This 207-nucleotide RNA was probed chemically with 2A3 and DMS. For DMS the reverse transcriptase was MarathonRT. 2A3 adducts were read by reverse transcription with SuperScript II with manganese. The reactions ran in a buffer of 150 mM KOAc, 10 mM MgCl2 and 150 mM bicine (pH 8.5), at 24 C.
[RMDB]
RNA sequence: GGGAACGACUCGAGUAGAGUCGAAAAGAGGCGGCCGGGAUAGCACAUAUCAGUCGGAUAAUUGUGCAAGUUGAUCGCUUCGGCGGUUUAAUUUGGCGGUGCCAUCAGGAUUUACUCGCACAUUGUGGCCGUUCCCUCGGGGAUGGAGUGUGUCCUGGUCUACUAUAUGGUUCGCCAUAUAGUAGACAAAAGAAACAACAACAACAAC
Reactivity to 2A3 in 0.01 (KOAc 150mM, MgCl2 10mM, bicine 150mM(pH8.5), 24C), signal-to-noise 4, nucleotides 027 to 156: g060a020g010g030c040g020g000c010c000g050g030g030a090u150a080g020c000a010c000a020u040a030u040c080a050g290u230c120g090g000a030u040a060a130u160u050g000u030g000c010a040a000g010u040u050g040a010u010c000g000c000u060u020c110g050g000c000g010g030u010u050u120a060a070u070u090u150g050g030c030g030g050u040g000c000c000a050u060c030a010g080g000a010u020u050u090a030c020u030c030g030c040a050c050a170u070u220g050u130g110g020c040c000g000u010u010c000c000c010u020c040g020g000g010g000a030u060g030g030a060g050u040g020u020g030u020c000c020u040g010
Reactivity to DMS in 0.01 (KOAc 150mM, MgCl2 10mM, bicine 150mM(pH8.5), 24C), signal-to-noise 2, nucleotides 027 to 156: g000a200g020g030c040g010g000c040c040g020g020g000a160u010a090g000c020a040c040a090u000a080u000c030a130g030u000c130g020g000a080u000a030a120u010u000g030u000g020c010a050a060g030u000u000g000a010u000c030g030c010u000u000c300g050g020c020g010g010u000u010u000a030a060u010u000u010g000g000c010g060g010u010g020c020c020a080u010c030a200g020g010a160u000u000u000a020c040u000c010g040c100a070c050a150u000u000g020u000g020g050c010c010g020u000u000c000c000c020u000c080g020g010g030g040a300u000g010g000a130g000u000g030u000g010u000c020c020u010g010